[RMDB]
This 177-nucleotide RNA was probed chemically with 2A3 and DMS. It was measured as part of the RMDB library OK1LIB.
RNA sequence: GGGAACGACUCGAGUAGAGUCGAAAACGUCGUGAACUAGCGACAAUGCCGUAGAUCUAUCGUUAUCUAACCGAAACAUCGUGACUAGUCGUAGAAUAGAACCAGGAGGGGGCGCUGUCAAACAAAGACGGGGUAUCAGAUUCGUCUGAUGCCCCGUAAAAGAAACAACAACAACAAC
Reactivity to 2A3 in 0.01 (KOAc 150mM, MgCl2 10mM, bicine 150mM(pH8.5), 24C), signal-to-noise 2, nucleotides 027 to 126: c070g030u020c040g020u030g070a070a050c020u020a060g000c020g000a020c020a020a000u120g040c010c000g070u010a020g040a040u040c010u050a110u050c090g030u040u020a020u030c020u010a010a020c030c020g010a040a000a000c010a020u030c010g020u020g110a080c060u010a030g060u020c050g030u050a020g080a030a040u090a030g070a060a050c030c020a030g000g070a010g010g010g000g000g000c050g000c020u030g000u020c050a050a050a020c050a050a080a000g130
Reactivity to DMS in 0.01 (KOAc 150mM, MgCl2 10mM, bicine 150mM(pH8.5), 24C), signal-to-noise 5, nucleotides 027 to 126: c140g010u000c050g040u010g000a100a080c150u030a130g000c020g000a060c050a110a070u020g030c020c000g010u020a050g000a050u000c070u000a160u010c130g020u020u020a050u010c040u010a090a100c120c040g020a070a040a100c170a050u000c020g010u000g000a080c020u030a080g000u000c020g030u010a080g010a040a070u020a030g020a080a120c050c040a040g010g000a100g000g010g000g000g010c040g020c030u000g010u000c040a060a100a040c110a070a140a090g010
The DMS profile rests on 7,654 reads.
The reactions ran in a buffer of 150 mM KOAc, 10 mM MgCl2 and 150 mM bicine (pH 8.5), at 24 C.